[RMDB]
RNA sequence: GGGAACGACUCGAGUAGAGUCGAAAAGGUCGGUGUUUCGACACCGACCACUUAGCGAGAAUGUUCCUCGGUAUAUAAAACAAACCCUUGGAAACAAGGGAAUACGAAUCGUGUUCGCACGAUUCAAUCGUUUGUAGAUAUUCGUAUCUACAAACGAAAAAGAAACAACAACAACAAC
Reactivity to 2A3 in 0.01 (KOAc 150mM, MgCl2 10mM, bicine 150mM(pH8.5), 24C), signal-to-noise 8, nucleotides 027 to 126: g000g010u010c000g000g000u010g020u010u080u110c170g030a010c000a000c010c000g000a000c000c000a000c010u020u030a030g060c010g020a010g040a180a170u180g020u030u000c000c010u010c030g000g040u070a110u020a020u030a260a120a030a030c090a050a100a080c010c000c000u000u010g010g010a030a030a020c010a000a000g000g000g020a000a010u050a020c020g000a000a000u000c010g000u000g050u050u060c210g020c050a000c000g010a000u010u010c000a000a070
Reactivity to DMS in 0.01 (KOAc 150mM, MgCl2 10mM, bicine 150mM(pH8.5), 24C), signal-to-noise 7, nucleotides 027 to 126: g030g020u000c000g010g010u000g010u000u000u010c170g010a050c000a010c000c000g020a010c000c000a010c020u000u000a080g010c020g010a030g010a110a190u010g010u000u000c010c010u000c170g030g020u010a050u010a110u020a040a050a070a100c190a100a100a130c000c000c000u000u000g000g000a160a100a180c010a010a000g000g010g010a050a020u010a060c150g010a020a010u000c000g020u000g010u000u010c200g020c000a010c000g000a010u000u000c000a080a100